Chemical mapping of a 177-nucleotide RNA with 2A3. The data come from the RNA Mapping Database (RMDB), library OK1LIB. Reactivities are given for positions 27 through 126. The RNA was probed in 150 mM KOAc, 10 mM MgCl2 and 150 mM bicine (pH 8.5) at 24 C.
RNA sequence: GGGAACGACUCGAGUAGAGUCGAAAACUGGACCUGUACGCAAGCGUAUCGCACUACAUGCCGAAGGAGAACCCCGUAACAUUCCUCUUCAUGAAACGGGCGAAACUCCAAUACUUCCGAAGAGGAAGUCACCCGGUCGAUUCGUCGACCGGGUGACAAAAGAAACAACAACAACAAC
Reactivity to 2A3 in 0.01 (KOAc 150mM, MgCl2 10mM, bicine 150mM(pH8.5), 24C), signal-to-noise 2, nucleotides 027 to 126: c000u030g000g020a040c000c000u080g070u140a070c100g050c140a100a060g000c020g070u100a060u160c040g000c050a070c010u010a010c010a080u030g010c000c000g060a070a070g030g020a040g000a030a030c020c000c030c020g040u060a080a050c000a100u010u030c000c000u020c000u050u000c000a020u070g040a100a110a000c000g020g000g030c050g010a160a050a000c030u010c020c000a050a040u130a070c020u120u000c030c000g010a010a000g000a000g010g020a000a000